[RMDB]
RNA sequence: GGGAACGACUCGAGUAGAGUCGAAAAUGCAGCUGGAUGAGACGAUACGUGCCCUGGCGCGGCAGCGGGCGCUUCACAUGGUGCUGAUCUGUCAAGGUCAGGAUCGUCUCGUCCAGCAGCAGGGAAGGGAAGAGCCGGAGUUCGCUCCGGCUCUUCCAAAAGAAACAACAACAACAAC
Reactivity to 2A3 in 0.01 (KOAc 150mM, MgCl2 10mM, bicine 150mM(pH8.5), 24C), signal-to-noise 1, nucleotides 027 to 126: u020g080c020a040g090c000u000g000g030a000u000g000a000g000a000c000g090a020u090a060c200g120u300g090c000c000c000u000g000g000c010g010c020g090g020c000a000g000c080g100g000g050c010g010c000u270u300c070a140c150a090u300g000g010u020g050c000u020g040a300u040c000u000g020u000c030a120a140g300g000u000c000a010g020g000a000u000c000g000u000c000u040c000g000u000c000c000a000g000c000a040g000c000a000g180g000g000a050a040g020